[RMDB]
RNA sequence: GGGAACGACUCGAGUAGAGUCGAAAAACACACUAUUCCUUGCCUUUUGUCUUUUUUUGUGUGUGUGGCAGGGUCUCUGUUGCCCAGGCUGGGAUGUGUUGGUGCAAUCUGGGCUUAUUGCAACCUCCGCUUCCCGGAUUCAAGUGAUUCUCCUGCACAUAGGGAUACCUUUCGAGGUAUCCCUAUGAAAAGAAACAACAACAACAAC
Reactivity to 2A3 in 0.01 (KOAc 150mM, MgCl2 10mM, bicine 150mM(pH8.5), 24C), signal-to-noise 2, nucleotides 027 to 156: a000c040a000c000a000c050u110a150u070u120c030c020u030u090g140c050c010u070u160u150u110g070u130c150u130u190u100u060u020u190u130g070u030g000u000g000u010g040u030g090g020c020a000g020g080g000u020c030u060c010u040g230u180u090g090c000c010c020a100g080g000c000u020g000g010g000a030u020g000u000g000u030u030g010g030u030g010c010a010a010u000c080u140g050g150g040c120u100u060a020u010u020g020c010a120a240c010c010u030c030c010g030c020u010u020c000c010c000g030g030a070u140u150c060a120a010g080u030g070a050u040u000c100u010c010c000u010g000c000a020